Structure probing data (DMS) for a 177-nucleotide construct. Source: RMDB library TTRDES, as collected in RNAgym. Reactivities are given for positions 27 through 126. Conditions: 150 mM KOAc, 10 mM MgCl2 and 150 mM bicine (pH 8.5), 24 C.
RNA sequence: GGGAACGACUCGAGUAGAGUCGAAAAGAUAUGGAGUGGGCAGGCUUUUGACGACGCUACGGUCGGAAACGACCGGUCGUCGAUAAGCCUGCCACUCCUAAGUCAAACCACCUGUUCGCAGGUGGAACUGUAGUGCCCUGUUCGCAGGGCACUACAGAAAAGAAACAACAACAACAAC
Reactivity to DMS in 0.01 (KOAc 150mM, MgCl2 10mM, bicine 150mM(pH8.5), 24C), signal-to-noise 1, nucleotides 027 to 126: g010a050u010a300u000g010g000a030g000u000g060g060g060c010a010g010g010c000u000u000u020u000g000a030c030g010a030c010g050c280u000a300c030g000g000u000c000g000g000a070a110a280c000g010a010c000c000g040g010u000c000g000u000c010g000a000u010a020a030g000c000c000u000g010c010c010a000c000u000c000c000u000a000a020g010u000c080a170a050a300c000c000a010c000c010u000g020u000u000c300g000c000a030g010g030u010g000g000a000a080